[RMDB]
RNA sequence: GGGAACGACUCGAGUAGAGUCGAAAACCCCUAGUUGGGCAGCGAGGGUUAGAGGAUUGAUCUGAAAAGGAAGAAUGCCUGUUGGGAAGGACUAGUUUGGAGCCAAUUAGGGCCAUGGCUGCUGGGGCACAUACGUAAGAUUCGUCUUACGUAUGUGAAAAGAAACAACAACAACAAC
Reactivity to DMS in 0.01 (KOAc 150mM, MgCl2 10mM, bicine 150mM(pH8.5), 24C), signal-to-noise 9, nucleotides 027 to 126: c060c000c010c120u010a080g010u000u000g010g010g010c050a050g010c080g020a090g000g000g010u000u000a060g010a110g010g000a080u000u010g010a130u000c030u000g010a060a050a100a100g000g010a080a080g010a110a080u000g010c020c010u000g010u010u010g010g000g000a100a070g000g000a080c060u000a070g010u000u000u000g010g000a100g010c040c030a040a080u000u010a110g000g000g000c030c040a060u000g000g010c020u000g000c030u000g010g000g000g010
Reactivity to 2A3 in 0.01 (KOAc 150mM, MgCl2 10mM, bicine 150mM(pH8.5), 24C), signal-to-noise 7, nucleotides 027 to 126: c010c010c000c000u020a050g070u070u110g050g020g000c020a030g010c030g070a080g040g030g010u060u110a050g030a040g110g040a060u040u100g030a030u040c040u050g040a070a070a040a030g080g010a040a040g050a090a040u110g050c000c010u050g120u120u170g050g010g010a050a040g020g000a020c010u020a030g100u080u060u100g050g010a020g040c020c000a030a030u100u090a100g000g060g000c000c030a050u070g040g000c000u020g000c010u020g000g000g000g020
Source information
Chemical mapping of a 177-nucleotide RNA with DMS and 2A3. For DMS the reverse transcriptase was MarathonRT. Conditions: 150 mM KOAc, 10 mM MgCl2 and 150 mM bicine (pH 8.5), 24 C.